[RMDB]
RNA sequence: GGGAACGACUCGAGUAGAGUCGAAAAUGAUUCCCAGGAUGUUCCCCAGCCAGGGAUUUUCAUCCUCGAGUCUCUUGAUGGUCUUUCUGGCCUUCCGGAGGUCUCUCUCGAGCUCCUCUGCCUUUCUGACACUUCAGGUUCGCCUGAAGUAAAAGAAACAACAACAACAAC
Reactivity to DMS in 0.01 (KOAc 150mM, MgCl2 10mM, bicine 150mM(pH8.5), 24C), signal-to-noise 9, nucleotides 027 to 129: u070g010a210u030u020c010c000c010a120g010g010a060u030g010u010u000c020c000c010c060a130g010c070c090a050g010g020g020a070u030u010u020u020c050a050u010c030c020u000c080g030a080g010u000c000u000c040u030u010g010a010u020g010g020u000c010u020u070u020c130u040g030g020c010c010u020u010c020c020g000g010a050g030g010u020c020u010c050u010c050u020c050g000a060g010c020u000c010c020u020c030u000g020c030c040u000u000u000c000u010g000a260c200
Reactivity to 2A3 in 0.01 (KOAc 150mM, MgCl2 10mM, bicine 150mM(pH8.5), 24C), signal-to-noise 9, nucleotides 027 to 129: u200g030a070u030u030c000c000c000a010g050g010a050u080g020u040u030c000c000c000c010a020g060c040c020a020g020g030g020a020u100u040u030u060c020a020u020c010c020u010c030g030a030g040u010c010u000c000u030u040g020a030u060g030g020u010c010u030u210u060c150u200g030g000c010c000u020u020c020c020g020g000a020g020g050u010c020u000c000u000c010u020c030g020a000g000c020u030c010c000u010c010u020g040c000c000u010u020u000c010u000g020a020c010